The record gives the reactivity of an RNA of 177 nucleotides to DMS and 2A3.
Conditions: 150 mM KOAc, 10 mM MgCl2 and 150 mM bicine (pH 8.5), 24 C.
Reactivities are given for positions 27 through 126.
For 2A3 the reverse transcriptase was SuperScript II with manganese.
DMS (dimethyl sulfate) methylates the pairing face of unpaired adenines and cytosines.
The DMS profile rests on 2,340 reads.
RNA sequence: GGGAACGACUCGAGUAGAGUCGAAAAGGAUCGCGGUUCGCCGCGAUCCAAAUAAAACCUAGUCACGCAAUAGGAAGACUAGGAUGCAAGAAACGUAUAAAAAAAGAGGACUCUUCGGAGUCCUCAAUCUCUUAUAUACGUUCGCGUAUAUAAGAGAAAAAGAAACAACAACAACAAC
Reactivity to DMS in 0.01 (KOAc 150mM, MgCl2 10mM, bicine 150mM(pH8.5), 24C), signal-to-noise 3, nucleotides 027 to 126: g010g010a000u000c010g000c020g010g000u000u010c280g040c000c010g020c000g000a010u000c000c000a010a040a040u010a090a050a140a100c000c000u000a000g010u000c000a090c180g010c110a180a140u010a110g000g010a140a140g000a020c000u010a010g000g010a040u000g000c110a100a080g000a080a100a060c150g010u000a130u000a000a010a060a100a100a120a170g000a000g000g000a010c010u000c000u000u020c180g000g000a030g000u000c000c000u000c000a000a020
Reactivity to 2A3 in 0.01 (KOAc 150mM, MgCl2 10mM, bicine 150mM(pH8.5), 24C), signal-to-noise 2, nucleotides 027 to 126: g000g020a020u000c020g000c030g020g030u030u050c210g000c060c000g010c000g000a000u000c000c020a000a000a000u010a000a020a000a010c000c000u000a000g000u000c000a020c140g030c040a090a280u130a300g170g080a140a090g040a020c010u010a000g010g010a020u060g000c050a050a080g020a200a280a040c070g090u110a060u300a230a200a040a040a010a010a040g020a010g030g010a000c010u010c020u050u110c290g100g000a030g000u000c010c000u010c000a010a000